Structure probing data (2A3 and DMS) for a 177-nucleotide construct.
Reactivities are given for positions 27 through 126.
For DMS, 1,068 sequencing reads were counted.
For DMS the reverse transcriptase was MarathonRT.
[RMDB]
RNA sequence: GGGAACGACUCGAGUAGAGUCGAAAAACAAUGACACCACACCACAAAGACUGAUGAUCACAGACAUGAGACCAUUGUCACUUGAGACUAUAAUAAUAUCACUAACCAGAGACAUCAUAACACACAGAGCCCAUAAUCCUUUCGAGGAUUAUGGGCUAAAAGAAACAACAACAACAAC
Reactivity to 2A3 in 0.01 (KOAc 150mM, MgCl2 10mM, bicine 150mM(pH8.5), 24C), signal-to-noise 3, nucleotides 027 to 126: a010c030a030a050u080g020a030c000a010c000c000a040c000a000c010c000a010c010a000a060a000g080a000c050u080g010a030u040g010a070u110c010a030c070a090g080a010c000a040u080g020a080g000a110c010c010a060u000u110g000u000c020a050c040u100u080g030a060g000a120c070u060a100u020a090a160u140a060a060u140a080u110c090a040c150u030a070a050c010c000a010g010a000g050a140c010a020u060c020a020u130a260a080c050a000c000a000c000a020g010
Reactivity to DMS in 0.01 (KOAc 150mM, MgCl2 10mM, bicine 150mM(pH8.5), 24C), signal-to-noise 1, nucleotides 027 to 126: a030c120a050a050u000g000a130c060a030c090c040a000c030a010c100c040a200c050a070a080a060g000a100c090u000g060a170u000g000a070u010c000a190c120a140g000a050c120a080u000g000a050g020a000c000c040a060u000u000g000u000c000a060c210u020u010g000a040g000a060c050u020a030u000a070a000u000a030a020u000a070u010c000a030c000u020a080a040c000c040a000g000a090g000a000c120a020u000c110a050u000a040a070c010a070c160a070c120a080g000